[RMDB]
RNA sequence: GGGAACGACUCGAGUAGAGUCGAAAAAUGCCAAAGUUACGUUUUACAACAAGGCUAGAGUUUGUAAAUUCUGGGUUCAUUUGUGAUGACAUAAGUCAGCAAACUGCGGGAAUACUGUCUCUUCUAUGUAUUUUGUGAAUAGUAAGCAUAAUUUUAGUGCAUAUAACUCGUUCGCGAGUUAUAUGCAAAAAGAAACAACAACAACAAC
Reactivity to DMS in 0.01 (KOAc 150mM, MgCl2 10mM, bicine 150mM(pH8.5), 24C), signal-to-noise 2, nucleotides 027 to 156: a110u000g020c000c050a100a070a090g050u000u010a040c070g020u000u010u010u020a040c010a070a120c080a090a120g010g020c050u000a060g020a120g020u000u000u000g010u010a060a060a100u000u000c020u030g030g020g020u000u000c020a090u000u020u000g010u020g020a100u000g000a060c030a110u000a010a120g020u000c020a100g050c000a060a020a060c050u000g030c080g000g070g000a040a190u000a030c010u000g010u000c020u000c020u020u010c050u020a060u010g010u010a080u000u000u000u000g040u000g020a080a050u000a110g010u000a040a050g030c000a070u000a060a100u000u000u000u000a130g000
Reactivity to 2A3 in 0.01 (KOAc 150mM, MgCl2 10mM, bicine 150mM(pH8.5), 24C), signal-to-noise 2, nucleotides 027 to 156: a010u150g050c040c010a070a020a040g040u030u060a030c010g010u000u050u080u080a030c040a070a000c020a060a090g030g020c040u070a000g000a030g060u000u270u140g070u080a120a160a100u150u020c010u040g050g030g010u030u040c020a050u010u090u080g050u080g130a210u070g010a000c010a050u200a120a060g020u000c040a000g000c020a040a030a050c030u110g020c000g020g030g030a010a010u030a080c010u030g130u020c010u030c000u070u050c020u050a070u080g070u040a100u120u160u070u100g080u000g020a040a010u010a080g020u020a010a000g000c000a040u030a070a130u180u040u060u140a060g030